Overview: The record gives the reactivity of an RNA of 177 nucleotides to DMS.
[RMDB]
RNA sequence: GGGAACGACUCGAGUAGAGUCGAAAAGCCACGCUAUUCGUAGCGUGGCGGUUAAGAUCUAGACAAAAACUGACAUAAAGUCUAGAUCAAAUAAAGUCAGAACGGUCCGGGAUUUCGAUCCCGGAAAUAAUUCAAAGUUCUUCGGAACUUUGAAUUAAAAAGAAACAACAACAACAAC
Reactivity to DMS in 0.01 (KOAc 150mM, MgCl2 10mM, bicine 150mM(pH8.5), 24C), signal-to-noise 1, nucleotides 027 to 126: g010c000c000a000c000g000c000u010a040u010u020c130g000u010a000g000c000g070u000g020g010c010g000g000u000u000a060a150g010a020u000c000u010a010g010a000c000a070a070a100a120a180c070u000g000a030c070a070u000a130a110a140g010u000c000u000a000g000a010u000c000a030a040a070u000a060a060a020g000u000c010a010g000a190a130c140g010g000u000c000c020g000g000g010a010u000u000u020c180g010a100u000c000c000c000g000g000a000a010a010
Conditions: 150 mM KOAc, 10 mM MgCl2 and 150 mM bicine (pH 8.5), 24 C. It was measured as part of the RMDB library M2PK50.